[RMDB]
RNA sequence: GGGAACGACUCGAGUAGAGUCGAAAAUUGAGCCCCUGCACCUGGUCAACCUGAGUUUUAAGAGGAUCCCUUUGGCGACUGGAUUGAGGACAGACAAGAGUGGACGGGGGACACAAGGAGGCCAUUUUCGUUAUCCAGGCCUGGUAGUGGCUAGGGACUAAAUAGUACUGUUCGCAGUACUAUUUAGAAAAGAAACAACAACAACAAC
Reactivity to 2A3 in 0.01 (KOAc 150mM, MgCl2 10mM, bicine 150mM(pH8.5), 24C), signal-to-noise 3, nucleotides 027 to 156: u090u120g030a040g050c000c000c000c010u030g040c050a040c010c010u040g030g000u040c040a030a050c020c020u060g030a100g110u080u060u080u110a130a060g040a080g010g020a060u050c040c010c000u050u050u080g040g000c020g020a030c050u050g010g030a030u080u070g050a020g030g020a040c040a040g050a020c020a090a030g060a030g070u060g030g020a020c020g030g010g000g000g040a010c010a000c010a050a040g060g000a040g010g000c010c010a040u060u030u040u120c020g040u070u030a020u030c030c010a020g060g000c000c000u020g020g030u080a100g040u020g010g020c010u020a080g010g000g020a010
Reactivity to DMS in 0.01 (KOAc 150mM, MgCl2 10mM, bicine 150mM(pH8.5), 24C), signal-to-noise 2, nucleotides 027 to 156: u000u000g030a180g030c000c000c000c060u010g040c060a100c030c060u000g040g000u000c020a080a100c020c030u000g010a120g000u000u000u000u000a050a210g010a130g040g020a090u010c040c020c020u010u010u000g010g020c060g000a110c040u010g010g010a060u010u000g000a080g060g030a120c060a180g000a110c040a050a100g000a100g020u010g010g020a130c050g020g000g020g030g020a080c070a030c050a120a100g000g020a090g010g010c000c020a070u000u010u000u000c110g030u000u010a110u000c020c000a140g010g010c020c030u000g000g020u000a080g010u010g000g000c000u010a090g020g020g020a200